[RMDB]
RNA sequence: GGGAACGACUCGAGUAGAGUCGAAAAGAUAUGGAGAGCUGAGAGCAACAGCCUUUCUCGGAAACGAGAGAAGGACAUGCUCAGGCUCUCCUAAGUCAAAACGGAUUAAAGUUCGCUUUAAUCCGAACACCAACGUAUACUUCGGUAUACGUUGGUGAAAAGAAACAACAACAACAAC
Reactivity to 2A3 in 0.01 (KOAc 150mM, MgCl2 10mM, bicine 150mM(pH8.5), 24C), signal-to-noise 2, nucleotides 027 to 126: g010a000u010a010u050g000g000a000g010a000g000c070u080g040a050g010a010g300c100a070a090c050a190g000c000c000u000u000u010c010u000c000g000g000a030a030a000c010g010a000g010a010g070a040a020g020g000a020c080a230u300g010c000u000c000a010g000g020c010u000c000u010c000c000u000a000a000g000u000c000a010a040a090a090c010g010g000a000u000u010a040a010a010g010u050u130c240g020c160u000u010u010a000a000u020c000c000g020a020a000
Reactivity to DMS in 0.01 (KOAc 150mM, MgCl2 10mM, bicine 150mM(pH8.5), 24C), signal-to-noise 2, nucleotides 027 to 126: g000a020u010a140u020g000g020a020g000a020g000c000u000g000a130g030a020g010c010a070a090c120a140g000c000c000u000u000u000c000u000c000g030g000a010a020a080c000g010a040g000a070g020a020a000g000g000a020c070a300u000g000c000u000c000a300g000g000c000u000c000u000c000c000u000a010a030g000u010c000a070a060a140a180c040g000g000a010u000u000a000a000a000g010u010u010c300g020c000u000u000u000a000a000u000c000c000g000a070a050
The record gives the reactivity of an RNA of 177 nucleotides to 2A3 and DMS. For 2A3, 4,699 sequencing reads were counted. The reactions ran in a buffer of 150 mM KOAc, 10 mM MgCl2 and 150 mM bicine (pH 8.5), at 24 C. For DMS, 1,648 sequencing reads were counted. For DMS the reverse transcriptase was MarathonRT. It was measured as part of the RMDB library TTRDEL. As a SHAPE reagent, 2A3 marks flexible, mostly unpaired nucleotides at the ribose 2'-OH.